[RMDB]
An RNA of 170 nucleotides, treated with 2A3 and DMS and read out base by base.
RNA sequence: GGGAACGACUCGAGUAGAGUCGAAAACGGGCGCUCCCCUCGAUACGCCUUCGAGGGGGUUCACACCUCCAGUCGGCGGGCCGGCUACUCUUCUUUCCCUUCUCUCGUCUUCCUCGGUCAACCUCUUACGCGCCGUGGUUCGCCACGGCGAAAAGAAACAACAACAACAAC
Reactivity to 2A3 in 0.01 (KOAc 150mM, MgCl2 10mM, bicine 150mM(pH8.5), 24C), signal-to-noise 4, nucleotides 027 to 129: c000g000g040g000c050g010c020u080c000c000c000c010u000c000g000a010u090a110c070g070c040c030u020u020c000g010a100g050g000g000g010g000u030u030c010a010c000a020c010c000u040c010c020a020g060u040c010g020g000c000g000g030g030c000c000g000g000c020u020a040c020u010c000u080u020c010u040u050u040c010c000c000u090u000c050u000c000u000c000g030u010c000u170u080c010c030u010c010g020g020u020c010a040a070c020c000u030c010u120u110a110c070g010
Reactivity to DMS in 0.01 (KOAc 150mM, MgCl2 10mM, bicine 150mM(pH8.5), 24C), signal-to-noise 3, nucleotides 027 to 129: c010g000g000g000c000g020c030u030c020c000c010c030u010c040g020a030u030a070c140g000c150c050u050u010c040g020a080g050g000g010g020g050u020u050c110a130c100a000c070c020u050c040c120a030g040u000c110g090g000c040g030g040g020c000c000g040g080c030u020a070c070u030c040u020u020c040u030u000u020c000c040c000u020u040c070u020c020u000c000g010u000c050u040u070c090c050u000c000g050g030u000c080a060a150c090c020u010c020u000u000a120c150g020
High DMS reactivity at an A or C suggests that its Watson-Crick edge is free. 2A3 adducts were read by reverse transcription with SuperScript II with manganese. Reactivities are given for positions 27 through 129. For DMS, 9,657 sequencing reads were counted.